Structure probing data (DMS and 2A3) for a 170-nucleotide construct.
[RMDB]
RNA sequence: GGGAACGACUCGAGUAGAGUCGAAAAAACUUCACCGUUGAUCCUCAAAAAGCUUAUCUCGAUUUCGUCAAUGCGGGAGGUGCCCCAUUGACAAAUUGUGUUAAGAUGCUUACUCCUAAAACUGGUACACGUUGCCCCUUCGGGGGCAACAAAAGAAACAACAACAACAAC
Reactivity to DMS in 0.01 (KOAc 150mM, MgCl2 10mM, bicine 150mM(pH8.5), 24C), signal-to-noise 2, nucleotides 027 to 129: a060a000c110u080u020c150a020c110c060g020u070u010g100a030u020c000c030u140c170a030a000a090a040a020g010c030u050u000a020u000c020u030c050g030a000u010u010u010c260g010u020c030a010a010u010g050c170g100g000g000a300g080g040u060g030c000c000c000c000a050u000u020g030a040c020a000a000a000u030u020g000u020g000u010u000a090a000g000a120u000g070c060u000u030a050c120u000c000c040u000a000a000a000a000c130u060g090g000u030a000c190a100c120
Reactivity to 2A3 in 0.01 (KOAc 150mM, MgCl2 10mM, bicine 150mM(pH8.5), 24C), signal-to-noise 1, nucleotides 027 to 129: a000a000c000u050u080c050a050c060c000g020u130u020g000a000u030c020c000u010c000a000a000a120a000a020g040c000u010u020a030u060c030u000c000g000a000u000u000u040c150g000u030c000a000a000u040g000c220g000g000g000a090g180g100u270g120c000c000c000c020a000u000u000g000a000c000a000a000a000u000u000g030u000g000u020u020a000a000g000a040u100g000c000u060u020a020c020u000c010c000u090a030a100a050a010c040u100g040g050u100a000c030a000c030

DMS adducts were read by reverse transcription with MarathonRT. For 2A3 the reverse transcriptase was SuperScript II with manganese. Conditions: 150 mM KOAc, 10 mM MgCl2 and 150 mM bicine (pH 8.5), 24 C.